Chemical mapping of a 177-nucleotide RNA with 2A3 and DMS.
The RNA was probed in 150 mM KOAc, 10 mM MgCl2 and 150 mM bicine (pH 8.5) at 24 C.
The DMS profile rests on 1,450 reads.
RNA sequence: GGGAACGACUCGAGUAGAGUCGAAAAACUUUCCAUUCCUCAGCUUUAAUUGUUUCGUUUGGAGUGUGACGUUACAUUAUCAGCUGACACAUUAUAUAUGAAUCAGUCAAUUUGUAAAAAAAUAUAAGUCGUCAUUAAAUUUCGAUUUAAUGACGACAAAAGAAACAACAACAACAAC
Reactivity to 2A3 in 0.01 (KOAc 150mM, MgCl2 10mM, bicine 150mM(pH8.5), 24C), signal-to-noise 7, nucleotides 027 to 126: a000c030u070u070u020c000c010a050u090u060c020c020u020c010a030g050c010u070u030u060a060a040u130u120g000u000u010u010c010g020u000u020u120g140g020a120g030u080g030u080g040a020c030g020u020u010a000c000a000u000u050a040u130c070a010g000c000u010g060a020c020a010c010a080u150u220a100u100a060u030a020u230g080a070a080u100c020a020g130u040c050a070a110u030u120u160g050u180a030a010a020a020a050a110a010u240a040u000a150a040
Reactivity to DMS in 0.01 (KOAc 150mM, MgCl2 10mM, bicine 150mM(pH8.5), 24C), signal-to-noise 1, nucleotides 027 to 126: a150c120u000u010u000c000c000a060u000u020c010c000u000c110a090g020c100u030u020u000a090a230u000u000g000u000u000u000c010g030u000u000u010g010g010a120g000u000g000u030g010a100c300g020u000u000a020c010a000u000u040a090u010c240a070g000c000u010g000a040c300a060c010a070u000u010a170u020a020u030a040u000g000a170a110u000c020a020g010u020c010a120a070u000u000u000g030u010a000a000a000a070a050a050a030u020a060u000a020a110